[RMDB]
RNA sequence: GGGAACGACUCGAGUAGAGUCGAAAAUACCCCCUUUUCACUUUGCCAGUUGGACUUAUGUCUUUAUUGGUCAUUCAAGUGGGGCAAAGGAAAUAUCCUUUUAAAACUCAGGCAAACUGGGUGUUUGGGAUUGGAUUACCUUCGGGUAAUCCAAUCCAAAAGAAACAACAACAACAAC
Reactivity to 2A3 in 0.01 (KOAc 150mM, MgCl2 10mM, bicine 150mM(pH8.5), 24C), signal-to-noise 2, nucleotides 027 to 126: u130a010c000c000c000c000c040u000u050u040u000c100a070c050u020u000u130g010c000c000a010g000u000u000g000g000a000c000u040u100a020u230g000u000c000u000u100u010a000u000u020g000g000u110c080a090u060u150c010a020a000g030u040g090g000g000g120c070a000a010a070g080g030a040a070a040u270a020u000c040c020u000u000u070u160a070a030a000a000c000u000c040a020g070g000c110a180a250a300c020u030g000g040g000u030g010u070u160u030g070